Background: Chemical mapping of a 207-nucleotide RNA with 2A3 and DMS. The reactions ran in a buffer of 150 mM KOAc, 10 mM MgCl2 and 150 mM bicine (pH 8.5), at 24 C. For DMS, 1,373 sequencing reads were counted.
[RMDB]
RNA sequence: GGGAACGACUCGAGUAGAGUCGAAAAAGAUAUAGUAAUAUGGAGAAGACAAAAUUGUUUCAAGCACCGACAGAACCGGAAGCGCCCCUUCUUUCAAAGAGAGGAGGACGGGUUAUUCACAUUUCAUUUGAUGGUCAGAGGCGAAUUGAAAGUUAAGCAAUAGAAGAGUGUUCGCACUCUUCUAUUGAAAAGAAACAACAACAACAAC
Reactivity to 2A3 in 0.01 (KOAc 150mM, MgCl2 10mM, bicine 150mM(pH8.5), 24C), signal-to-noise 2, nucleotides 027 to 156: a000g070a000u080a020u070a130g030u040a100a080u030a130u190g030g000a060g020a040a020g030a010c080a100a090a060a080u110u090g070u030u060u060c040a060a000g000c040a040c010c010g030a040c020a050g050a070a030c030c040g020g010a050a000g040c030g040c040c000c080c000u020u000c000u040u100u060c070a130a200a040g010a020g000a020g020g000a000g000g020a020c050g060g000g000u120u060a060u120u110c010a000c010a060u060u110u170c030a050u070u120u140g020a030u070g010g010u010c010a010g010a020g050g010c040g030a040a030u040u090g020a020a050a050g010u070u070a050a000g000
Reactivity to DMS in 0.01 (KOAc 150mM, MgCl2 10mM, bicine 150mM(pH8.5), 24C), signal-to-noise 1, nucleotides 027 to 156: a150g000a120u000a060u040a170g020u000a110a100u010a040u000g010g010a120g000a100a070g060a120c060a040a120a030a110u000u000g000u000u030u000c010a100a140g020c010a060c040c010g000a060c070a060g040a120a210c050c010g030g000a080a130g000c080g050c030c010c020c050u020u000c020u000u000u000c040a070a060a300g000a090g000a040g040g010a070g010g040a040c090g000g030g050u000u000a030u000u010c140a060c030a060u000u000u000c030a080u000u020u050g000a020u010g020g050u000c030a010g010a200g020g020c070g030a060a080u000u000g020a020a040a170g020u000u000a090a110g000